The record gives the reactivity of an RNA of 207 nucleotides to 2A3. The reactions ran in a buffer of 150 mM KOAc, 10 mM MgCl2 and 150 mM bicine (pH 8.5), at 24 C.
RNA sequence: GGGAACGACUCGAGUAGAGUCGAAAAGUGUACCCUUCGGGGUACACAAAAAGGGGUCUCCUAAGACAGGACAUGCUCUGUACUGAAGCCUCCACGGUACAUGAGCAACAGCUCGAGGAGACGGAGGCACCCAAAAAGGACUCCUUCGGGAGUCCAAUGCAUUUUUAAGGUUCGCCUUAAAAAUGCAAAAAGAAACAACAACAACAAC
Reactivity to 2A3 in 0.01 (KOAc 150mM, MgCl2 10mM, bicine 150mM(pH8.5), 24C), signal-to-noise 1, nucleotides 027 to 156: g000u000g020u010a000c000c010c000u010u010c300g000g000g010g030u050a020c010a010c000a000a010a030a000a010g130g010g030g030u010c000u040c000c000u060a160a090g040a060c100a120g150g160a090c040a130u080g020c000u000c000u010g000u000a000c010u030g060a050a070g010c000c000u020c000c010a000c030g000g000u000a000c000a030u270g000a000g050c010a100a010c050a010g040c010u000c040g010a000g050g000a010g000a000c010g000g000a000g000g000c000a020c000c010c010a010a060a040a060a000g260g040a000c000u230c220c030u030u060c220g130g010g000a010g010u010c000c030a010a010